RNA sequence: GGGAACGACUCGAGUAGAGUCGAAAACAGCAAUUUGAAUAAAGUGGAAAUGCCCUCUCCAUAGUUAACACUGCAGGGGUCCUUUCCAAUGCAGAAUGGCUUGGUUCUUAGGUUUAGGUAGUAGGGAACAAGGGACGAUGUUCGCAUCGUCCCUUGUAAAAGAAACAACAACAACAAC
Reactivity to DMS in 0.01 (KOAc 150mM, MgCl2 10mM, bicine 150mM(pH8.5), 24C), signal-to-noise 1, nucleotides 027 to 126: c120a070g000c090a070a090u000u010u030g010a140a090u020a090a050a070g030u000g000g000a000a030a040u000g010c120c000c010u000c020u010c070c090a100u000a040g010u030u040a070a040c160a130c060u000g010c210a010g020g010g030g040u010c090c070u000u000u000c000c000a020a080u010g000c080a110g000a050a060u010g000g000c010u000u010g010g000u010u010c050u000u000a080g010g010u010u000u000a030g010g010u000a070g010u000a050g010g000g010a070